[RMDB]
RNA sequence: GGGAACGACUCGAGUAGAGUCGAAAAUGUCCAUCCUUCGACCAUAACCUUUGUGGUUUGGUCUUGGAUGGAGUACCCAUUUGCAAUUGGUUUAAUUCGGGUGUGUGUGUGAUUUUAAACGGGUCUCGUAGUAACCACUUUUCGAAGUGGUUACUACAAAAGAAACAACAACAACAAC
Reactivity to DMS in 0.01 (KOAc 150mM, MgCl2 10mM, bicine 150mM(pH8.5), 24C), signal-to-noise 6, nucleotides 027 to 126: u020g010u000c000c000a000u000c000c000u000u000c290g000a020c000c000a020u020a010a010c000c000u010u030u040g030u030g010g010u000u000u000g000g000u000c000u000u000g000g010a010u000g000g010a030g020u010a080c030c010c010a190u020u020u000g010c130a080a080u010u000g010g020u020u010u000a060a110u010u000c070g000g010g020u000g000u020g000u010g010u000g010u000g010a060u000u010u010u020a020a070a080c090g010g010g000u000c040u020c120
Reactivity to 2A3 in 0.01 (KOAc 150mM, MgCl2 10mM, bicine 150mM(pH8.5), 24C), signal-to-noise 5, nucleotides 027 to 126: u190g050u000c000c000a010u000c000c010u030u050c110g000a000c000c010a030u100a220a040c010c000u120u110u300g250u300g050g000u000u000u010g020g000u000c000u000u010g000g000a000u000g000g000a000g000u070a080c000c000c030a060u110u090u110g060c040a060a150u080u100g060g030u100u090u170a060a090u090u080c030g010g030g000u020g000u020g000u010g010u010g010u020g120a130u030u020u070u200a050a080a010c040g060g000g020u000c030u010c110